[RMDB]
RNA sequence: GGGAACGACUCGAGUAGAGUCGAAAAAAUCUACACAUAACUCAGUGCCUUUCCUUAUAGGUAGAUCUGUGGCAAUUAAAUCAACGAUAUCGCUUUCACUACCGUCAUCAUUUUUGCGGAAUACAAAUUUACAAUUAUGUGCUUGCCCCACGCGGGGAUAAUGUCUUCUCUUCGGAGAAGACAUUAUAAAAGAAACAACAACAACAAC
Reactivity to 2A3 in 0.01 (KOAc 150mM, MgCl2 10mM, bicine 150mM(pH8.5), 24C), signal-to-noise 4, nucleotides 027 to 156: a000a000u060c080u060a020c040a000c010a090u130a090a060c030u070c070a020g010u010g100c010c010u010u050u070c040c010u180u100a140u080a110g020g000u010a030g010a110u030c040u060g020u050g010g030c020a000a030u100u110a110a060a090u110c060a030a040c070g050a050u040a020u100c050g010c060u040u190u180c050a030c070u070a030c010c010g150u100c030a070u030c030a080u080u010u120u170u190g050c030g030g050a060a040u100a080c070a050a180a010u120u160u070a110c050a080a070u120u110a050u200g020u020g020c040u080u070g030c000c000c030c000a060c060g080c090g010g030g000g000
Reactivity to DMS in 0.01 (KOAc 150mM, MgCl2 10mM, bicine 150mM(pH8.5), 24C), signal-to-noise 2, nucleotides 027 to 156: a030a050u000c010u000a020c030a030c020a060u000a030a060c020u020c040a100g000u000g020c020c030u000u000u010c070c030u000u000a120u010a040g010g020u000a030g010a070u000c020u000g020u000g020g000c010a060a080u000u010a070a040a100u000c040a020a030c050g010a070u010a050u000c030g010c060u000u010u000c070a050c010u000a030c020c010g010u000c060a080u000c080a130u020u010u000u000u000g010c020g010g000a120a080u000a130c050a020a060a030u010u000u000a030c020a070a080u010u000a020u010g020u010g000c040u000u000g000c050c000c000c000a110c150g000c110g010g000g020g000
An RNA of 207 nucleotides, treated with 2A3 and DMS and read out base by base. Conditions: 150 mM KOAc, 10 mM MgCl2 and 150 mM bicine (pH 8.5), 24 C. Reactivities are rounded to 0.1 and cut off at 0 and 3. The DMS profile rests on 3,793 reads. For 2A3 the reverse transcriptase was SuperScript II with manganese.